[RMDB]
RNA sequence: GGGAACGACUCGAGUAGAGUCGAAAAGGCGUGACGUGACGACUAAAUUACACGGAAAUAAAAUACCAGCGAAGUAUGAACUGCAGCAUAACAAUAAAACGGCAACUCGCAACCACUCAAACACUGCCACGAUUACCUGUUUCGACAGGUAAUCGUGAAAAGAAACAACAACAACAAC
Reactivity to DMS in 0.01 (KOAc 150mM, MgCl2 10mM, bicine 150mM(pH8.5), 24C), signal-to-noise 2, nucleotides 027 to 126: g020g000c000g010u020g000a070c080g000u000g000a060c040g010a120c110u010a060a020a170u000u010a130c090a060c080g000g010a140a070a030u050a050a080a040a090u000a080c020c020a010g010c110g000a090a040g000u020a040u010g000a020a080c090u010g000c050a030g000c000a050u000a170a020c110a160a050u060a100a040a050a170c080g000g000c010a040a110c030u020c010g000c050a040a070c080c010a040c060u000c060a010a000a070c170a040c040u000g010c110
Reactivity to 2A3 in 0.01 (KOAc 150mM, MgCl2 10mM, bicine 150mM(pH8.5), 24C), signal-to-noise 5, nucleotides 027 to 126: g050g010c020g010u040g010a050c000g010u060g000a040c060g020a010c070u170a090a090a160u190u140a050c040a010c020g030g070a060a080a000u210a000a100a030a010u140a070c030c010a020g040c060g050a080a000g030u100a080u150g020a090a040c030u070g010c000a020g020c010a040u080a150a080c060a150a110u190a120a090a000a010c020g020g000c030a040a010c010u020c040g000c000a000a090c000c010a030c010u050c010a020a100a020c060a000c050u060g060c020
Source: RMDB library OK1LIB, as collected in RNAgym. The record gives the reactivity of an RNA of 177 nucleotides to DMS and 2A3. DMS adducts were read by reverse transcription with MarathonRT. For 2A3 the reverse transcriptase was SuperScript II with manganese.